[RMDB]
About this RNA
Structure probing data (2A3 and DMS) for a 177-nucleotide construct. High 2A3 reactivity points to a flexible backbone, as in loops and unpaired stretches.
RNA sequence: GGGAACGACUCGAGUAGAGUCGAAAAAUAUUUGGUAAGCGAUAGUAACAAGAGAUAAUCAAGUGGGGACGCGCAUCCCCACCAGUGACUAACCGCCCUUCGGGGCACUAUCGUUAGCCCUAGACCUCUCUAAGAUUCUUUUCGAAGAAUCUUAGAGAAAAGAAACAACAACAACAAC
Reactivity to 2A3 in 0.01 (KOAc 150mM, MgCl2 10mM, bicine 150mM(pH8.5), 24C), signal-to-noise 9, nucleotides 027 to 126: a000u170a080u060u100u080g010g000u030a060a010g010c000g000a000u000a000g030u060a110a080c090a180a040g080a010g040a160u140a160a050u120c020a070a040g000u000g000g000g000g000a010c030g080c030g010c300a060u010c000c010c000c000a000c000c000a020g090u020g050a010c030u040a080a030c040c060g010c000c010c000u020u070c220g010g000g000g000c010a000c000u000a000u000c000g020u030u010a020g020c010c000c000u030a050g020a060c010c000u000
Reactivity to DMS in 0.01 (KOAc 150mM, MgCl2 10mM, bicine 150mM(pH8.5), 24C), signal-to-noise 3, nucleotides 027 to 126: a110u010a080u050u000u010g000g010u000a120a120g010c010g010a000u000a000g010u000a130a130c300a090a060g020a090g000a100u050a080a090u000c010a130a120g000u000g000g000g000g010a020c030g000c290g000c160a300u000c000c010c000c010a000c020c040a050g000u010g010a050c080u020a110a110c100c050g010c010c010c000u010u030c070g020g010g000g020c000a020c020u000a000u010c030g000u000u000a170g010c030c000c070u000a040g000a090c060c000u010
Reactivities are given for positions 27 through 126.